[RMDB]
RNA sequence: GGGAACGACUCGAGUAGAGUCGAAAAUUGAGGCGUGGGGUUCGUCCUUGCGUUUUGUAUGCAGCCUCGUGUAUCGAAAGGGAAUCAGGUUAAUAUUCCUGAACCGAGACGUGGAUAAUAUGUGGUACUGAUACGAAAAGUUCGCUUUUCGUAUCAGAAAAGAAACAACAACAACAAC
Reactivity to 2A3 in 0.01 (KOAc 150mM, MgCl2 10mM, bicine 150mM(pH8.5), 24C), signal-to-noise 2, nucleotides 027 to 126: u050u070g050a000g020g000c020g010u010g000g030g000g120u050u080c110g010u170c030c010u000u000g000c000g000u000u000u010u070g030u020a100u100g040c000a030g080c000c000u010c020g020u000g000u020a120u060c050g030a190a040a040g020g000g040a050a120u020c040a030g060g050u090u050a070a060u040a100u170u040c000c010u020g010a020a050c000c010g000a010g000a040c030g010u040g020g010a020u060a160a050u110a140u180g050u030g000g070u040a120
Reactivity to DMS in 0.01 (KOAc 150mM, MgCl2 10mM, bicine 150mM(pH8.5), 24C), signal-to-noise 3, nucleotides 027 to 126: u010u000g020a030g030g010c030g010u010g030g010g000g010u000u020c200g020u000c010c010u000u000g020c000g020u000u000u010u000g010u010a040u000g000c090a110g010c000c000u000c030g040u000g000u000a070u010c060g010a050a100a260g000g010g000a060a080u010c130a050g020g000u020u010a150a070u010a180u000u000c000c000u000g000a040a140c080c010g000a070g010a080c040g010u010g020g000a080u010a040a080u000a060u010g020u000g000g010u000a170